Structure probing data (2A3 and DMS) for a 177-nucleotide construct.
RNA sequence: GGGAACGACUCGAGUAGAGUCGAAAAUCGUCAAACACAGCAACAACUACACCCGUGUGACCGAUACCAUAUAUGCUUGCUUGUAAGUAUGGCGGUUUACUAGAGAAGCCGUAACCAACGGUAGGAAAAUCAUGCCACCAUUCGUGGUGGCAUGAUUAAAAGAAACAACAACAACAAC
Reactivity to 2A3 in 0.01 (KOAc 150mM, MgCl2 10mM, bicine 150mM(pH8.5), 24C), signal-to-noise 1, nucleotides 027 to 126: u020c010g010u030c000a050a020a020c000a000c000a040g000c000a010a030c000a050a050c060u120a020c030a100c010c030c000g000u020g030u030g040a020c030c000g010a080u130a100c040c010a030u080a020u010a050u180g100c180u100u020g030c120u170u120g040u100a020a200g030u030a030u010g000g010c050g000g000u000u030u000a000c020u080a030g000a010g040a300a010g010c030c010g000u030a020a140c070c010a060a020c010g000g000u030a020g160g040a060a190
Reactivity to DMS in 0.01 (KOAc 150mM, MgCl2 10mM, bicine 150mM(pH8.5), 24C), signal-to-noise 1, nucleotides 027 to 126: u000c000g020u010c020a050a090a110c070a080c030a020g020c020a030a070c040a030a050c160u000a160c150a080c060c080c050g000u000g030u000g000a100c020c010g010a110u010a130c040c040a040u000a090u000a160u010g000c160u000u000g010c090u000u000g000u000a030a240g040u020a050u000g010g000c030g000g000u020u010u020a090c150u000a070g000a030g020a160a080g010c010c030g000u000a080a170c060c030a040a050c030g000g000u000a070g010g010a150a060
Conditions: 150 mM KOAc, 10 mM MgCl2 and 150 mM bicine (pH 8.5), 24 C. DMS adducts were read by reverse transcription with MarathonRT. 2A3 adducts were read by reverse transcription with SuperScript II with manganese.